[RMDB]
RNA sequence: GGGAACGACUCGAGUAGAGUCGAAAAGGACCCGUCACCUCGUUAAUCAAUGGGAAAAACGUAACUGCAAACGACGAUACGUUCGCACUGGCAGCCUAACGGCCGCCGUCCUCUGCCUAGUUCACUGACGGGCUAGUGUCGCAAGACCGGUAGCAAUCGUUCUUCUUACGUUCGCGUAAGAAGAACGAAAAGAAACAACAACAACAAC
Reactivity to 2A3 in 0.01 (KOAc 150mM, MgCl2 10mM, bicine 150mM(pH8.5), 24C), signal-to-noise 1, nucleotides 027 to 156: g040g010a060c020c000c120g040u040c090a110c000c030u080c000g110u010u130a070a150u220c200a060a030u260g110g000g000a000a140a020a000a000c050g090u200a070a030c010u120g080c040a180a050a010c040g050a000c030g060a050u060a160c060g220u120u040c070g000c020a060c030u050g010g000c010a020g040c000c030u130a160a070c040g090g030c000c040g060c000c020g000u010c000c000u000c000u000g080c000c040u050a020g030u090u100c110a200c250u230g020a020c090g000g000g010c000u000a040g020u010g060u150c040g000c050a050a030g000a000c000c110g020g000u000a020g000c000a000a170u090